[RMDB]
RNA sequence: GGGAACGACUCGAGUAGAGUCGAAAACAUACGGACUUCGGUCCGUAUGAAAGAACCUCAAAUUGACGCAAACUACCGCGUCAUCGCGAGGAAGCGAGGAAAAAAUCGAGGUGUUCGCACCUCGAAACGUAGUGUAAGACUUCGGUCUUACACUACGAAAAGAAACAACAACAACAAC
Reactivity to 2A3 in 0.01 (KOAc 150mM, MgCl2 10mM, bicine 150mM(pH8.5), 24C), signal-to-noise 5, nucleotides 027 to 126: c000a000u010a000c000g010g000a000c010u020u080c250g070g000u000c000c010g010u000a000u000g000a010a000a010g060a040a060c010c010u020c020a050a060a060u050u030g010a000c000g000c010a030a100a250c160u170a150c110c130g000c000g030u000c000a000u000c010g040c040g020a030g050g070a030a010g070c050g070a130g120g020a140a090a030a020a010a030u040c000g000a010g010g010u010g030u040u060c230g000c040a000c000c010u000c010g000a000a000a010
Reactivity to DMS in 0.01 (KOAc 150mM, MgCl2 10mM, bicine 150mM(pH8.5), 24C), signal-to-noise 5, nucleotides 027 to 126: c000a010u000a000c000g010g010a010c010u010u010c160g030g010u000c000c000g010u000a000u000g010a060a070a090g000a140a150c010c010u000c040a040a290a090u000u000g010a020c000g010c000a070a100a140c260u000a140c290c170g000c010g000u000c020a010u000c130g000c300g000a030g030g000a100a070g000c080g020a100g000g010a010a030a070a050a110a050u000c000g010a020g010g030u000g010u000u000c170g010c000a010c000c000u010c000g000a010a030a080